Notes: The record gives the reactivity of an RNA of 177 nucleotides to 2A3 and DMS. The 2A3 profile rests on 4,166 reads.
RNA sequence: GGGAACGACUCGAGUAGAGUCGAAAACUUCUCGAGAUCCUCAGCUUUUUUCCUUGAGUUCACCCACUGCUCGAGGACGUCUUCCCUUCCCCCGCGAUUCUUCUUCGACUCGGCCCGGCUCAUUUCGGCUUAAAAGUAAGUUCGCUUACUUUUAAGCAAAAGAAACAACAACAACAAC
Reactivity to 2A3 in 0.01 (KOAc 150mM, MgCl2 10mM, bicine 150mM(pH8.5), 24C), signal-to-noise 3, nucleotides 027 to 126: c000u070u040c010u020c020g060a070g020a060u050c000c010u040c030a020g030c000u130u070u020u020u100u100c000c000u050u060g040a030g020u050u070c020a070c030c010c000a040c060u040g010c000u000c010g010a010g010g020a100c020g030u010c030u040u030c010c010c020u010u030c000c010c000c000c000g000c010g010a020u020u010c000u020u020c000u030u030c020g010a020c010u000c010g010g000c010c000c010g050g000c020u020c040a020u000u050u030c010g050
Reactivity to DMS in 0.01 (KOAc 150mM, MgCl2 10mM, bicine 150mM(pH8.5), 24C), signal-to-noise 4, nucleotides 027 to 126: c140u000u000c020u000c030g000a090g000a110u000c030c020u000c050a080g010c030u000u000u010u000u020u000c020c010u000u000g010a080g010u000u000c060a130c030c020c020a140c100u000g000c010u000c010g000a020g010g000a080c110g010u000c100u000u000c010c000c010u000u000c010c010c010c030c030g040c090g000a070u000u000c030u000u000c050u000u000c020g010a050c050u000c030g010g010c010c020c010g010g000c080u000c060a060u000u000u000c070g000

It was measured as part of the RMDB library 15KREP.